[RMDB]
RNA sequence: GGGAACGACUCGAGUAGAGUCGAAAAAAAAAAAGAUAUGGAUCCAGUGUAAGUUGCCUUGGAUUUAACAUUCGGAAACGAAUGUUUGUCAGGAACUACAAUUGAGCUGGAUCCUAAGUCAAAAAAACCUUACAGUAAGGUUCGCCUUACUGUAAGGAAAAGAAACAACAACAACAAC
Reactivity to 2A3 in 0.01 (KOAc 150mM, MgCl2 10mM, bicine 150mM(pH8.5), 24C), signal-to-noise 1, nucleotides 027 to 126: a000a020a020a000a020a080a100g090a020u120a020u170g000g010a020u010c010c010a000g030u000g050u150a170a160g010u040u090g280c020c010u070u140g190g020a060u300u220u170a010a020c000a000u020u000c020g060g000a110a070a050c000g000a020a010u000g030u000u020u010g020u020c030a000g040g030a050a030c010u040a040c080a040a110u090u180g020a040g030c000u010g000g000a000u040c000c010u000a000a000g020u000c070a020a020a030a000a020a050a130
Reactivity to DMS in 0.01 (KOAc 150mM, MgCl2 10mM, bicine 150mM(pH8.5), 24C), signal-to-noise 1, nucleotides 027 to 126: a000a000a010a030a090a070a040g000a000u000a300u010g000g010a020u000c010c020a010g000u000g010u020a120a030g010u000u000g000c040c010u020u000g020g000a010u010u010u000a000a000c000a010u000u000c000g020g000a040a060a120c010g000a070a000u000g010u000u000u000g020u000c030a010g000g000a060a030c040u010a200c060a030a050u010u010g010a300g010c000u000g000g000a030u000c010c010u000a030a040g000u040c020a000a000a070a030a050a050a100